Description:
An RNA of 177 nucleotides, treated with DMS and read out base by base. For DMS, 1,045 sequencing reads were counted. Values cover nucleotides 27 to 126. The reactions ran in a buffer of 150 mM KOAc, 10 mM MgCl2 and 150 mM bicine (pH 8.5), at 24 C. It was measured as part of the RMDB library TTRDEL.
RNA sequence: GGGAACGACUCGAGUAGAGUCGAAAAUUAAAUUAAGGAUAUGGAGCGUGCUGGGAGUGUAUUCUCCGUUGAAAUCGGAAACGAUGGAGGAGAUACACGGAAGCACGCUCCUAAGUCGACGAGGAAACGGGAGUAUAUGGUUCGCCAUAUACUCCCGAAAAGAAACAACAACAACAAC
Reactivity to DMS in 0.01 (KOAc 150mM, MgCl2 10mM, bicine 150mM(pH8.5), 24C), signal-to-noise 1, nucleotides 027 to 126: u010u010a050a140a160u010u020a070a090g020g000a050u000a300u010g010g000a010g010c000g000u000g000c030u000g030g040g010a300g020u000g010u010a000u020u010c010u000c000c000g010u000u000g000a050a180a010u000c010g000g000a150a170a160c020g000a020u000g000g020a110g000g030a010g000a010u000a000c020a010c000g000g020a180a030g070c000a000c000g000c020u000c000c000u000a000a000g020u010c020g000a120c210g010a100g000g020a040a070a140